[RMDB]
RNA sequence: GGGAACGACUCGAGUAGAGUCGAAAAGAUAUGGAGGUGUACCAGACAUGCUUGAGCUCGGAAACGAGCUUUAAGCAACAGCUGGGCACCUCCUAAGUCAAAAGCCUCCACCUUCGGGUGGAGGCAACAGUCUAGUAUAGUUCGCUAUACUAGACUGAAAAGAAACAACAACAACAAC
Reactivity to DMS in 0.01 (KOAc 150mM, MgCl2 10mM, bicine 150mM(pH8.5), 24C), signal-to-noise 4, nucleotides 027 to 126: g000a030u000a090u020g010g000a020g020g010u010g010u000a110c000c000a020g000a140c120a120u010g020c000u000u000g000a010g000c000u000c000g000g000a010a020a050c000g010a010g000c000u000u000u000a000a000g030c000a080a050c160a160g010c010u000g010g010g000c000a000c000c000u000c000c000u000a000a060g000u000c010a150a140a170a180g000c010c000u010c000c000a010c000c000u000u020c300g030g020g040u010g010g000a000g010g010c010a000a030
An RNA of 177 nucleotides, treated with DMS and read out base by base. In probing experiments dimethyl sulfate is read out at A N1 and C N3, which are open when not base-paired. For DMS the reverse transcriptase was MarathonRT.